This 177-nucleotide RNA was probed chemically with DMS and 2A3. The data come from the RNA Mapping Database (RMDB), library 15KREP. For 2A3, 1,619 sequencing reads were counted. 2A3 adducts were read by reverse transcription with SuperScript II with manganese. The reactions ran in a buffer of 150 mM KOAc, 10 mM MgCl2 and 150 mM bicine (pH 8.5), at 24 C.

RNA sequence: GGGAACGACUCGAGUAGAGUCGAAAACGCCUACUUUGGAUGUGAGGAAGGUACUAUGUACUUUGUGCCUAGAGCUAAGUCUGUUGUCUCAAGGAUUGGAGACUCCAUCUUUACAGGCUGUACUGGCGGUAGGGUAAAGGUUCGCCUUUACCCUACCAAAAGAAACAACAACAACAAC
Reactivity to DMS in 0.01 (KOAc 150mM, MgCl2 10mM, bicine 150mM(pH8.5), 24C), signal-to-noise 2, nucleotides 027 to 126: c190g020c020c000u000a090c110u000u000u010g010g000a030u000g000u030g000a030g000g000a080a050g000g020u010a040c020u010a100u020g030u010a010c040u000u000u000g000u010g000c010c020u020a100g020a080g000c060u000a080a050g010u010c090u000g000u000u000g000u000c030u010c030a100a080g000g030a080u020u000g000g010a130g010a080c040u000c010c010a010u000c000u000u000u000a050c140a040g000g010c000u010g030u000a060c040u000g000g000c300
Reactivity to 2A3 in 0.01 (KOAc 150mM, MgCl2 10mM, bicine 150mM(pH8.5), 24C), signal-to-noise 2, nucleotides 027 to 126: c030g030c020c000u050a060c100u020u050u100g040g000a000u000g090u150g030a020g020g050a050a040g040g000u030a020c030u130a040u190g000u040a020c020u070u060u120g060u060g010c000c010u000a050g010a010g050c070u090a070a000g050u050c060u060g230u190u090g040u030c010u010c030a030a050g070g010a070u070u230g080g030a060g000a000c000u030c000c000a000u000c000u050u060u000a030c030a030g020g050c010u030g060u100a070c020u010g040g000c020